[RMDB]
RNA sequence: GGGAACGACUCGAGUAGAGUCGAAAAGCUCGACCGGUAUGGCCCGAGCGAACACUUGACGACCGGAUUGGCCCGUCUUGUGGAUUAGGACGUUCUACGACCGGCUUGGCCCGUAGUUCGUCCGAAAGGCAAGGUUGACGUUCGCGUCGACCUUGCCAAAAGAAACAACAACAACAAC
Reactivity to 2A3 in 0.01 (KOAc 150mM, MgCl2 10mM, bicine 150mM(pH8.5), 24C), signal-to-noise 3, nucleotides 027 to 126: g020c000u020c000g060a080c000c000g080g210u300a240u290g090g030c130c220c010g010a000g000c020g010a090a010c010a000c000u000u030g000a000c000g060a020c000c030g000g290a290u150u180g150g110c040c170c000g000u000c010u010u000g000u000g020g040a060u020u140a030g010g000a000c000g000u000u000c000u010a030c010g040a090c010c050g140g040c140u110u260g090g000c010c130c000g000u000a000g010u010u000c000g010u000c000c020g000a010a000a010
Reactivity to DMS in 0.01 (KOAc 150mM, MgCl2 10mM, bicine 150mM(pH8.5), 24C), signal-to-noise 2, nucleotides 027 to 126: g060c000u000c030g040a280c000c040g010g000u020a050u030g020g030c090c040c040g020a010g020c000g000a080a060c000a000c000u000u000g000a020c050g000a230c000c010g050g000a090u050u070g030g000c100c030c030g000u000c000u000u000g010u000g000g000a100u050u010a060g010g000a080c000g030u000u000c000u000a000c000g020a300c070c040g030g020c130u040u060g000g010c020c020c060g010u000a000g050u000u010c000g030u010c010c000g020a100a090a050
Structure probing data (2A3 and DMS) for a 177-nucleotide construct. 2A3 adducts were read by reverse transcription with SuperScript II with manganese. DMS adducts were read by reverse transcription with MarathonRT. The reactions ran in a buffer of 150 mM KOAc, 10 mM MgCl2 and 150 mM bicine (pH 8.5), at 24 C. As a SHAPE reagent, 2A3 marks flexible, mostly unpaired nucleotides at the ribose 2'-OH. Source: RMDB library OK1LIB, as collected in RNAgym. The 2A3 profile rests on 2,324 reads. The DMS profile rests on 2,125 reads.